The record gives the reactivity of an RNA of 177 nucleotides to DMS and 2A3. The data come from the RNA Mapping Database (RMDB), library OK1LIB. Values cover nucleotides 27 to 126. 2A3 adducts were read by reverse transcription with SuperScript II with manganese. The DMS profile rests on 27,129 reads. Conditions: 150 mM KOAc, 10 mM MgCl2 and 150 mM bicine (pH 8.5), 24 C.

RNA sequence: GGGAACGACUCGAGUAGAGUCGAAAACUAAGGAGCGUGUGCUGGCGGCGGUCCUUCACGGUGCGAUGAACGCGGCCGAUUACCAUUACGUGGGCUAGUUGUGUGCCGUGCUCCGUGGAUCGGAAAAGGUUGUCGCGGCUUUCGGGUCGCGACGACCAAAAGAAACAACAACAACAAC
Reactivity to DMS in 0.01 (KOAc 150mM, MgCl2 10mM, bicine 150mM(pH8.5), 24C), signal-to-noise 7, nucleotides 027 to 126: c050u020a090a060g010g010a050g000c010g010u010g010u020g000c020u000g010g000c080g000g000c010g000g010u010c030c030u000u020c040a030c030g000g000u000g000c050g010a170u020g010a070a100c130g000c030g010g010c010c020g000a080u010u010a100c050c040a080u020u050a090c190g020u000g010g000g010c130u020a050g010u000u000g010u030g000u040g000c010c020g010u010g000c040u000c010c010g020u000g000g010a080u020c050g000g000a080a080a090a100
Reactivity to 2A3 in 0.01 (KOAc 150mM, MgCl2 10mM, bicine 150mM(pH8.5), 24C), signal-to-noise 6, nucleotides 027 to 126: c030u060a030a060g080g000a040g030c010g000u030g010u060g020c010u000g030g000c000g000g000c000g000g010u010c000c000u020u020c010a000c010g010g010u030g010c030g060a090u100g110a100a010c030g000c010g030g000c000c000g000a000u030u080a060c010c020a030u090u090a040c080g040u090g020g000g030c040u030a050g020u020u030g050u010g050u150g050c000c000g000u030g020c020u000c000c010g040u070g040g010a050u130c050g050g000a050a070a050a060